[RMDB]
RNA sequence: GGGAACGACUCGAGUAGAGUCGAAAACAAAACAACACUUAAGCAAAACUUUCCUCGUGUACCUGUCAUGGCAUUGACAGCAACUGCAACCCACUCAGUUCGUGAGGACAUUUUGACAAACAAACAAGCAGUCAGUUUGGUUCGCCAAACUGACUGCAAAAGAAACAACAACAACAAC
Reactivity to 2A3 in 0.01 (KOAc 150mM, MgCl2 10mM, bicine 150mM(pH8.5), 24C), signal-to-noise 2, nucleotides 027 to 126: c060a000a130a000a060c080a030a070c050a060c180u080u220a000a070g020c040a010a000a000a110c060u030u060u040c000c000u000c000g050u000g010u150a130c030c010u090g000u070c000a030u050g080g130c150a220u030u050g010a000c000a000g020c040a040a010c000u010g070c000a000a060c010c000c010a070c000u010c000a060g010u110u090c050g020u020g110a010g000g000a010c000a010u000u000u000u000g060a100c060a000a050a020c090a030a040a060c000a070a070